An RNA of 177 nucleotides, treated with DMS and 2A3 and read out base by base. It was measured as part of the RMDB library TTRINS.
RNA sequence: GGGAACGACUCGAGUAGAGUCGAAAAGAUAUGGAGCAUGAAGAAGGUCAACAGCUUACGUAACAUCAUUUUAACUCGGAAACGAGUUAAAAUGUGGUAAGACAUGACUGUAAAGUGCUCCUAAGUCGCGAACUAAACAGUUCGCUGUUUAGUUCGCAAAAGAAACAACAACAACAAC
Reactivity to DMS in 0.01 (KOAc 150mM, MgCl2 10mM, bicine 150mM(pH8.5), 24C), signal-to-noise 2, nucleotides 027 to 126: g010a090u000a120u020g000g000a020g030c020a020u010g010a050a230g030a290a300g000g000u000c000a080a030c160a160g000c000u000u000a000c000g020u000a090a200c210a060u010c000a020u000u000u000u000a000a000c000u000c000g000g000a030a010a100c000g010a010g010u000u000a000a000a010a000u000g000u040g000g000u000a010a000g000a040c040a300u000g010a000c000u010g050u000a010a220a300g000u000g000c000u000c010c000u000a020a080g010u000c050
Reactivity to 2A3 in 0.01 (KOAc 150mM, MgCl2 10mM, bicine 150mM(pH8.5), 24C), signal-to-noise 2, nucleotides 027 to 126: g010a000u050a000u120g010g000a030g000c000a000u030g010a100a300g020a010a010g090g020u020c090a220a020c070a230g020c000u010u010a000c000g080u080a170a070c010a230u220c000a000u000u010u010u020a000a020c000u000c000g000g020a060a000a000c000g000a000g000u010u000a000a000a000a000u000g000u010g010g000u000a000a000g020a030c140a300u300g000a010c000u020g000u000a000a000a000g010u000g000c020u050c000c000u010a000a000g000u000c050